[RMDB]
Structure probing data (2A3 and DMS) for a 177-nucleotide construct. Conditions: 150 mM KOAc, 10 mM MgCl2 and 150 mM bicine (pH 8.5), 24 C. For 2A3 the reverse transcriptase was SuperScript II with manganese. It was measured as part of the RMDB library M2PK50.
RNA sequence: GGGAACGACUCGAGUAGAGUCGAAAACAGACUCACUUCGGUGAGUCUGAAAGGAGUAAUCGAUAGCGAAAACUACCAGAUUACUCAAGGGUAGAGACAAAAAAAGUUAGAGCUUCGGCUCUAACAACUUGUAAGCAAACUUCGGUUUGCUUACAAGAAAAGAAACAACAACAACAAC
Reactivity to 2A3 in 0.01 (KOAc 150mM, MgCl2 10mM, bicine 150mM(pH8.5), 24C), signal-to-noise 1, nucleotides 027 to 126: c000a010g010a000c000u000c000a010c000u050u080c200g070g000u000g010a000g000u000c000u000g010a000a010a000g080g010a000g000u010a020a000u010c000g030a060u020a040g040c120g160a060a040a010a060c010u020a000c040c010a070g010a020u000u030a010c000u020c020a030a010g060g000g000u100a060g040a000g050a100c100a040a130a040a010a020a020a040g010u000u000a010g000a000g000c000u090u070c290g100g010c020u000c000u010a000a000c010a000a020
Reactivity to DMS in 0.01 (KOAc 150mM, MgCl2 10mM, bicine 150mM(pH8.5), 24C), signal-to-noise 2, nucleotides 027 to 126: c010a010g000a010c000u000c000a000c000u000u010c190g020g000u000g000a010g020u000c010u000g000a020a070a110g000g020a010g000u000a000a000u000c010g010a040u000a000g030c020g010a120a020a110a270c000u000a010c000c000a180g010a020u000u000a000c010u000c010a090a120g000g000g010u010a090g000a110g000a040c120a000a000a050a070a100a130a100g000u000u000a010g010a000g010c020u000u010c260g030g000c000u000c000u000a010a000c000a030a060